[RMDB]
RNA sequence: GGGAACGACUCGAGUAGAGUCGAAAAAAGGAGUGAUUUCAAUGGCACAAGAUAUCAUUUCAACAAUCGGUGACUUAGUAAAAUGGAUUAUCGACACAGUGAACAAAUUCACUAAAAAAUAAGAUGACAAUACAACCAUGUUCGCAUGGUUGUAUUGAAAAGAAACAACAACAACAAC
Reactivity to 2A3 in 0.01 (KOAc 150mM, MgCl2 10mM, bicine 150mM(pH8.5), 24C), signal-to-noise 3, nucleotides 027 to 126: a010a000g030g000a020g010u010g010a040u040u010u060c060a080a070u160g150g020c080a030c010a080a020g010a010u050a010u040c020a030u030u040u020c040a050a040c000a060a090u060c030g010g000u010g010a020c010u030u110a010g050u190a090a090a060a060u070g020g020a080u020u030a040u060c020g060a010c000a000c010a120g000u010g020a030a010c040a080a130a120u090u060c010a000c030u160a100a050a030a000a020a030u190a040a020g070a090u090g020a020
Reactivity to DMS in 0.01 (KOAc 150mM, MgCl2 10mM, bicine 150mM(pH8.5), 24C), signal-to-noise 3, nucleotides 027 to 126: a070a080g000g010a000g020u010g010a050u000u000u010c010a070a140u020g020g000c060a080c090a140a140g000a040u000a030u000c000a020u000u020u000c090a080a090c160a080a080u000c050g020g020u000g010a040c040u000u000a070g000u000a040a040a050a090u000g000g010a100u000u000a020u000c030g020a050c200a060c170a020g020u000g000a020a090c160a060a070a120u010u010c010a010c000u040a000a020a050a050a050a050u010a060a070g000a070u000g000a160